[RMDB]
RNA sequence: GGGAACGACUCGAGUAGAGUCGAAAAACGAGGUACGCCACGAAAAUAUGACCGGUGUCAUAGCCUCUAGCACACAGAGGUCGCGUGGGUUCAACUCCCCCCCUUUUCCGAGGGUAUCGGAAACCAAAAAACACAAUUUGGUUCGCCAAAUUGUGAAGCGAUGCAAUUAGUUCGCUAAUUGCAUCGCAAAAGAAACAACAACAACAAC
Reactivity to 2A3 in 0.01 (KOAc 150mM, MgCl2 10mM, bicine 150mM(pH8.5), 24C), signal-to-noise 1, nucleotides 027 to 156: a010c070g040a060g040g000u040a030c040g180c050c010a000c000g100a050a030a040a010u030a000u000g000a020c080c160g300g090u230g010u080c010a010u020a000g020c020c010u030c010u070a120g090c110a070c000a000c000a080g000a000g020g000u040c070g000c020g020u020g000g040g050u060u080c050a050a150c050u050c000c020c000c000c000c000c030u030u090u000u000c000c000g010a000g010g000g000u190a030u000c000g010g000a010a010a010c040c030a030a030a000a050a050a000c000a000c000a000a000u000u000u000g010g050u020u010c080g040c020c000a000a000a000u000u010g000u020g000a020a000